[RMDB]
RNA sequence: GGGAACGACUCGAGUAGAGUCGAAAAUCUGAGCUUCGGCUCAGAGCAAAGCGUACUACCAUGCAGCUUGGACCGCACACUCCCCACCCAAUCCCAAAUAGGAUUGGAGGUGUGCGCUAGCUGUGUGGUAUCGCCUACAGCGCUAUUCGUAGCGCAACACUAUGAUGUCCUUCGGGACAUCAUAGUGAAAAGAAACAACAACAACAAC
Reactivity to DMS in 0.01 (KOAc 150mM, MgCl2 10mM, bicine 150mM(pH8.5), 24C), signal-to-noise 1, nucleotides 027 to 156: u010c000u000g000a020g070c000u000u010c300g060g020c010u030c010a000g080a040g020c070a200a090a080g020c000g010u000a070c120u000a000c000c000a010u000g000c010a030g020c030u000u030g080g000a060c240c010g000c000a030c000a020c010u000c070c000c030c130a280c300c010c010a050a000u000c010c000c050a140a160a230u000a070g000g000a000u020u000g000g010a060g000g000u000g060u000g000c000g020c010u000a020g000c000u000g050u000g020u000g020g010u000a010u010c010g000c000c000u000a140c040a100g000c000g000c010u010a020u000u000c300g020u000a040g000c060g040c010a050a140
Reactivity to 2A3 in 0.01 (KOAc 150mM, MgCl2 10mM, bicine 150mM(pH8.5), 24C), signal-to-noise 4, nucleotides 027 to 156: u030c000u000g000a000g000c010u050u150c300g130g000c010u020c000a000g010a000g030c050a050a150a000g010c030g070u100a080c040u000a010c010c000a000u010g000c010a030g000c000u080u110g030g080a170c140c040g000c000a000c000a000c000u080c010c010c030c000a010c000c000c010a000a000u020c030c010c020a180a300a090u300a130g000g000a000u000u010g000g000a030g010g000u000g010u000g000c000g000c010u000a000g020c010u010g010u010g010u000g000g000u000a000u030c000g000c030c000u080a090c080a050g000c000g000c000u020a030u050u140c220g120u070a000g000c000g000c020a010a000
This 207-nucleotide RNA was probed chemically with DMS and 2A3. The RNA was probed in 150 mM KOAc, 10 mM MgCl2 and 150 mM bicine (pH 8.5) at 24 C. DMS adducts were read by reverse transcription with MarathonRT. Source: RMDB library RNAMAK, as collected in RNAgym.